[RMDB]
RNA sequence: GGGAACGACUCGAGUAGAGUCGAAAAGCGGAUUCUCCGGACCUUGCUAACCUCUUUGGAGCCCAUUUUGAAAUAAAGUCAAAAAUCUUAGACCACCCUAAUGUGGCCUUCUAUGGAAGGUACAUCGAACGUCUCCGUCAUUCGUGACGGAGACGUUAAAAGAAACAACAACAACAAC
Reactivity to 2A3 in 0.01 (KOAc 150mM, MgCl2 10mM, bicine 150mM(pH8.5), 24C), signal-to-noise 1, nucleotides 027 to 126: g000c000g130g010a090u000u000c000u010c020c050g000g000a000c000c040u070u180g000c000u010a150a150c000c000u020c000u000u250u000g060g060a000g000c000c000c000a090u000u000u000u010g010a010a100a100u160a000a010a000g080u110c000a060a060a060a060a060u000c070u300u170a000g000a000c030c010a040c030c030c030u180a170a080u160g000u040g090g000c000c040u000u000c000u130a100u150g220g000a020a020g000g000u000a000c030a190u090c000g010
Chemical mapping of a 177-nucleotide RNA with 2A3. Conditions: 150 mM KOAc, 10 mM MgCl2 and 150 mM bicine (pH 8.5), 24 C. Values cover nucleotides 27 to 126. For 2A3 the reverse transcriptase was SuperScript II with manganese.